This 207-nucleotide RNA was probed chemically with DMS and 2A3.
For 2A3, 10,942 sequencing reads were counted.
For DMS the reverse transcriptase was MarathonRT.
The data come from the RNA Mapping Database (RMDB), library M2RFPK.
For DMS, 3,721 sequencing reads were counted.

[RMDB]
RNA sequence: GGGAACGACUCGAGUAGAGUCGAAAAAGAGCCGGAUACGUCCGGCUCAACGGGGGAUACGUGUGGUGCCGUCCGCUCCCCCUAUGGCAUAACAAAUGCACCACACACUAGGCUACGGGCUAGUGAAAAAAGGUGUAUGUGUUCGCACAUACACCAACGUACCUAAUAUGUUCGCAUAUUAGGUACGAAAAGAAACAACAACAACAAC
Reactivity to DMS in 0.01 (KOAc 150mM, MgCl2 10mM, bicine 150mM(pH8.5), 24C), signal-to-noise 2, nucleotides 027 to 156: a130g030a030g010c020c020g050g000a100u010a050c160g020u000c010c000g020g050c000u000c000a010a030c050g010g000g010g020g010a140u000a020c050g030u000g020u000g000g040u000g010c030c030g050u000c040c050g010c060u000c010c010c000c000c030u000a030u000g000g000c070a190u000a100a080c090a060a050a210u010g000c000a020c020c000a060c020a250c040a020c040u000a020g010g000c000u000a300c180g030g000g040c000u000a030g000u000g000a020a060a070a090a100a070g020g010u000g000u000a000u000g040u000g020u000u020c300g000c020a020c000a030u040a000c000a010c000c010a020a020
Reactivity to 2A3 in 0.01 (KOAc 150mM, MgCl2 10mM, bicine 150mM(pH8.5), 24C), signal-to-noise 8, nucleotides 027 to 156: a000g000a000g010c010c000g010g000a020u040a050c180g090u000c000c000g000g000c000u000c000a000a000c000g000g000g000g000g010a020u030a130c020g030u040g000u000g040g000u010g010c010c010g030u030c040c060g070c050u040c000c000c000c000c020u050a150u200g120g010c070a090u080a220a050c060a070a090a040u100g000c000a000c010c000a000c010a000c000a000c000u060a020g170g050c010u030a020c240g090g020g000c010u010a010g030u050g070a110a030a020a020a010a020g010g000u000g000u000a000u000g020u000g020u020u090c230g030c070a000c000a000u000a000c000a000c000c000a000a000
DMS (dimethyl sulfate) methylates the pairing face of unpaired adenines and cytosines. Conditions: 150 mM KOAc, 10 mM MgCl2 and 150 mM bicine (pH 8.5), 24 C.